RNA sequence: GGGAACGACUCGAGUAGAGUCGAAAACAUGAUGCGUUCGCGCAUCAUGAAAUCCCUGUUGACGGAAUGAACGGAAUUCAGUAGCGAUAACUGAGCAGGGAAAAACUUACUAUGUUCGCAUAGUAAGCUGAGAUAAGAACUUCGGUUCUUAUCUCAGAAAAGAAACAACAACAACAAC
Reactivity to DMS in 0.01 (KOAc 150mM, MgCl2 10mM, bicine 150mM(pH8.5), 24C), signal-to-noise 4, nucleotides 027 to 126: c000a000u000g010a010u000g010c010g020u010u010c250g040c010g030c000a000u000c000a020u000g000a030a130a110u000c000c000c000u000g010u000u010g000a040c020g000g000a190a140u010g010a240a180c000g000g010a030a190u010u000c010a000g000u010a020g010c030g000a060u010a020a010c010u000g000a020g000c000a020g000g000g010a030a080a040a070a300c010u000u000a000c000u000a000u000g000u010u010c200g010c000a010u010a000g010u000a010a000g000

The record gives the reactivity of an RNA of 177 nucleotides to DMS.